An RNA of 207 nucleotides, treated with 2A3 and DMS and read out base by base. Conditions: 150 mM KOAc, 10 mM MgCl2 and 150 mM bicine (pH 8.5), 24 C. DMS adducts were read by reverse transcription with MarathonRT. 2A3 adducts were read by reverse transcription with SuperScript II with manganese. Values cover nucleotides 27 to 156.

RNA sequence: GGGAACGACUCGAGUAGAGUCGAAAAAGGUCGGUGGCCUCGACGUUGUCGGUGUGUUCGUCGGGGAUGCUGCGGCGAAGAUCUACGUCGGCGCGAUGAAGAUCUGGCCCCCGGUCCCGGACUUCACCCCGUUCACGAUCUCCAGCGAAGACCCUGGUAGGUUAAGAUACUUCGGUAUCUUAACCUAAAAAGAAACAACAACAACAAC
Reactivity to 2A3 in 0.01 (KOAc 150mM, MgCl2 10mM, bicine 150mM(pH8.5), 24C), signal-to-noise 4, nucleotides 027 to 156: a000g070g040u040c020g040g080u050g030g020c020c080u090c100g020a020c010g030u050u180g060u040c020g000g010u020g010u010g010u080u050c100g010u020c030g020g020g020g010a020u100g060c040u100g020c030g020g000c020g100a120a000g000a020u020c010u050a090c030g020u020c010g100g230c220g050c110g200a010u030g050a060a020g000a010u010c000u010g060g000c020c000c010c000c010g000g020u010c010c000c000g100g000a000c000u000u000c010a010c010c020c000c000g070u110u100c020a030c020g080a270u000c040u000c020c000a050g030c000g040a030a030g060a130c000c020c000u040g100g050
Reactivity to DMS in 0.01 (KOAc 150mM, MgCl2 10mM, bicine 150mM(pH8.5), 24C), signal-to-noise 1, nucleotides 027 to 156: a050g000g000u010c030g030g010u000g030g000c110c020u010c040g010a080c030g000u000u010g000u010c020g050g030u010g010u010g020u010u000c190g020u010c000g000g010g000g000a040u000g000c040u040g030c120g030g020c000g030a110a080g000a040u000c000u000a160c030g030u000c020g030g010c160g020c080g030a030u010g010a150a080g000a050u000c000u000g010g020c030c060c010c020c030g020g020u000c010c000c000g030g020a030c000u010u000c030a040c020c020c020c020g060u010u000c040a070c080g000a100u000c010u010c030c010a150g010c060g000a140a070g030a080c010c030c010u010g010g040